Structure probing data (2A3 and DMS) for a 207-nucleotide construct.
It was measured as part of the RMDB library OK3TST.
The reactions ran in a buffer of 150 mM KOAc, 10 mM MgCl2 and 150 mM bicine (pH 8.5), at 24 C.
RNA sequence: GGGAACGACUCGAGUAGAGUCGAAAAGCUGCCUGCUGAAGAUAAAGUCUACUGUGAAAUCAACCACCUCUACACAAGAGGUGCUUCAGUAUCUGGCCACACAAUUGCAACUUGACUCACACGGAGACUGUUGCCAUGCUGAGGCAGUGAAAAGAAACAAUCAUAGUGUUUUCGAACACUAUGAUUGAAAAGAAACAACAACAACAAC
Reactivity to 2A3 in 0.01 (KOAc 150mM, MgCl2 10mM, bicine 150mM(pH8.5), 24C), signal-to-noise 9, nucleotides 027 to 156: g000c010u010g010c010c010u020g010c010u020g020a040a030g010a080u120a130a130a020g040u080c060u090a110c120u210g050u080g200a100a100a110u160c040a040a080c030c000a010c010c000u000c010u080a160c150a040c050a240a030g000a000g000g000u000g000c000u020u020c000a010g000u010a050u050c090u080g050g000c070c010a050c000a010c010a090a150u060u070g020c000a030a030c020u090u130g050a090c000u020c030a070c030a050c220g210g010a030g020a050c040u020g000u020u010g000c000c010a030u080g000c070u070g020a030g010g000c010a010g010u030g070a060a090a000a010g090a020a070a010
Reactivity to DMS in 0.01 (KOAc 150mM, MgCl2 10mM, bicine 150mM(pH8.5), 24C), signal-to-noise 5, nucleotides 027 to 156: g030c020u000g020c020c010u000g000c030u000g010a060a080g010a120u000a040a070a130g020u000c030u010a130c080u000g020u010g010a090a070a110u000c040a050a080c090c000a020c000c000u010c000u000a170c210a160c210a140a060g000a040g010g010u000g020c030u010u000c020a040g000u010a040u000c040u010g010g020c030c090a100c080a050c060a060a170u000u000g010c030a040a050c050u000u000g010a080c030u000c020a110c060a090c120g010g010a090g010a070c060u000g020u000u000g020c020c070a070u000g010c040u000g010a080g010g030c000a020g030u000g000a050a050a060a110g010a220a120a180
About this RNA:
The DMS profile rests on 14,865 reads.